This 207-nucleotide RNA was probed chemically with 2A3. The reactions ran in a buffer of 150 mM KOAc, 10 mM MgCl2 and 150 mM bicine (pH 8.5), at 24 C. The 2A3 profile rests on 688 reads. It was measured as part of the RMDB library OK3TST.
RNA sequence: GGGAACGACUCGAGUAGAGUCGAAAACUGGUUCUGGGCGGAACAAUCAGUGCGAUCGCGAUCGGUCCUGCAGGAGCAACGCAGACCUACGGCGCCACAGGUGGGCUUGUUCCGGUACGUGCCGGCGAGGUGAUCAAGAUCACCUACACAGUCGCGCCUCAUCGUUUGUGUUCGCACAAACGAUGAGAAAAGAAACAACAACAACAAC
Reactivity to 2A3 in 0.01 (KOAc 150mM, MgCl2 10mM, bicine 150mM(pH8.5), 24C), signal-to-noise 1, nucleotides 027 to 156: c040u010g040g040u020u060c010u040g000g010g050c030g130g000a070a100c060a010a120u160c050a020g030u010g020c010g030a070u090c030g000c000g060a100u060c050g020g030u020c000c010u000g010c000a080g040g090a060g050c010a040a000c050g000c010a000g060a090c000c000u010a030c090g070g070c080g060c070c000a100c030a040g000g050u150g010g030g030c010u020u030g000u010u020c010c020g000g020u060a040c060g000u070g020c010c010g000g000c060g010a030g000g030u000g000a040u050c090a090a000g100a200u010c000a000c000c000u110a060c090a000c000a030g080u130c000g000c040g010c070